[RMDB]
RNA sequence: GGGAACGACUCGAGUAGAGUCGAAAAUGCGAUAAACGGCACCUAUAAGGUGGUGCCGAACCAGCGUGACCUACCAACACGCAACGAGCAGUCUGGUAUGACUGCAAACCUAUGGUAAACAUAAGAAAUAGAUGUAUUUAUUCGUAAAUACAUCUAUAAAAGAAACAACAACAACAAC
Reactivity to DMS in 0.01 (KOAc 150mM, MgCl2 10mM, bicine 150mM(pH8.5), 24C), signal-to-noise 7, nucleotides 027 to 126: u010g010c110g000a110u000a070a100a170c010g000g010c000a010c000c000u000a140u030a160a150g020g020u000g000g010u000g020c000c000g020a030a060c060c040a140g000c010g010u000g000a030c020c010u000a020c010c010a200a090c000a010c000g010c010a140a090c200g010a200g010c000a010g000u000c000u000g010g020u010a070u010g000a010c000u000g000c010a020a040a070c060c040u000a050u000g010g010u010a030a110a090c150a080u010a070a110g000a060a090
Reactivity to 2A3 in 0.01 (KOAc 150mM, MgCl2 10mM, bicine 150mM(pH8.5), 24C), signal-to-noise 6, nucleotides 027 to 126: u060g010c040g070a090u120a110a120a040c010g010g000c010a000c000c010u110a130u050a300a140g230g040u110g010g000u010g000c010c000g000a000a000c010c000a010g000c000g000u010g030a090c010c010u010a030c000c020a030a010c000a000c020g020c010a020a050c040g020a020g000c000a000g010u000c010u100g160g100u300a100u240g000a000c000u000g000c000a000a010a030c030c010u070a090u100g000g010u060a090a150a010c040a060u220a110a090g070a080a210
Background:
An RNA of 177 nucleotides, treated with DMS and 2A3 and read out base by base. Conditions: 150 mM KOAc, 10 mM MgCl2 and 150 mM bicine (pH 8.5), 24 C. DMS adducts were read by reverse transcription with MarathonRT. The data come from the RNA Mapping Database (RMDB), library M2PK90. DMS (dimethyl sulfate) methylates the pairing face of unpaired adenines and cytosines. Reactivities are given for positions 27 through 126.